[RMDB]
RNA sequence: GGGAACGACUCGAGUAGAGUCGAAAACUUUGGAUGGCAAAAGGGGAGAUGCUACACCUGCAGGUGGUGUUAGUUCUUUCUGUCAGAAGGCUUGAGGAUCUGCCUUCUCAGAACACAGUGCUAGAAACUCCUGCCAAUAAUGACCUUUAAUAUGCCAACCUUCUCCUAAAUUCGUUUAGGAGAAGGUAAAAGAAACAACAACAACAAC
Reactivity to 2A3 in 0.01 (KOAc 150mM, MgCl2 10mM, bicine 150mM(pH8.5), 24C), signal-to-noise 5, nucleotides 027 to 156: c010u070u070u130g130g030a050u070g050g000c020a030a030a060a060g040g010g030g000a090g010a060u100g050c050u100a050c030a030c050c030u100g010c040a030g020g060u100g020g010u030g040u060u040a020g000u020u040c000u010u030u000c000u000g030u070c030a000g010a030a010g010g010c050u140u130g090a090g070g140a140u070c050u070g020c000c000u000u000c020u010c010a030g020a050a000c120a000c010a120g040u050g050c020u030a020g060a080a080a000c010u020c000c000u010g010c030c010a050a080u150a100a070u110g060a030c000c000u060u050u050a110a100u170a090u130g010c010c000a010
Reactivity to DMS in 0.01 (KOAc 150mM, MgCl2 10mM, bicine 150mM(pH8.5), 24C), signal-to-noise 2, nucleotides 027 to 156: c070u000u010u020g020g010a120u020g000g020c050a030a100a110a130g020g040g000g030a150g020a140u000g020c070u000a090c050a060c040c030u000g020c040a070g030g020u000g010g020u010g010u020u000a000g000u000u000c010u000u010u000c010u000g000u010c060a050g020a070a050g010g010c010u000u000g000a150g010g000a180u000c050u000g020c010c000u000u000c000u010c050a060g000a040a270c080a060c090a080g030u000g000c020u010a060g000a180a040a070c060u000c010c000u000g020c000c090a050a070u000a040a080u000g010a090c020c030u000u000u000a060a100u000a090u000g000c000c020a130
Conditions: 150 mM KOAc, 10 mM MgCl2 and 150 mM bicine (pH 8.5), 24 C. Structure probing data (2A3 and DMS) for a 207-nucleotide construct. Reactivities are given for positions 27 through 156. The data come from the RNA Mapping Database (RMDB), library OK3TST. The DMS profile rests on 4,295 reads. For DMS the reverse transcriptase was MarathonRT. For 2A3, 3,712 sequencing reads were counted.